[RMDB]
RNA sequence: GGGAACGACUCGAGUAGAGUCGAAAAGAUAUGGAACCUGAACUACAGCUUUCCCGUUCGUUGAAAUCGGAAACGAUGGAGAACGGGGGCUGCAGGUUCCUAAGUCAAAGCACCCUUCGGGGUGCAACAAUGCUCUUCAGUUCGCUGAAGAGCAUUGAAAAGAAACAACAACAACAAC
Reactivity to 2A3 in 0.01 (KOAc 150mM, MgCl2 10mM, bicine 150mM(pH8.5), 24C), signal-to-noise 2, nucleotides 027 to 126: g020a050u070a050u150g000g020a000a000c010c010u010g020a080a080c100u190a030c300a000g010c020u150u270u300c030c010c000g030u030u000c040g140u280u060g000a040a030a010u010c000g000g040a080a050a060c010g000a000u000g010g040a030g010a020a000c010g000g000g000g000g000c000u000g000c000a000g010g000u000u000c000c000u010a030a000g000u010c020a000a150a000g010c010a000c020c000c000u020u030c300g070g000g000g010u000g000c000a000a010
Reactivity to DMS in 0.01 (KOAc 150mM, MgCl2 10mM, bicine 150mM(pH8.5), 24C), signal-to-noise 3, nucleotides 027 to 126: g000a050u000a300u000g010g000a000a000c000c010u000g010a080a050c080u010a300c020a000g000c010u000u000u000c010c000c000g030u000u000c000g010u000u000g000a120a090a010u000c000g020g000a080a070a130c020g010a000u000g000g010a060g000a020a020c000g010g010g000g000g000c000u000g000c000a010g000g010u000u010c000c000u000a010a060g000u010c030a080a110a160g010c000a010c000c000c000u000u000c190g020g020g000g000u000g010c010a030a050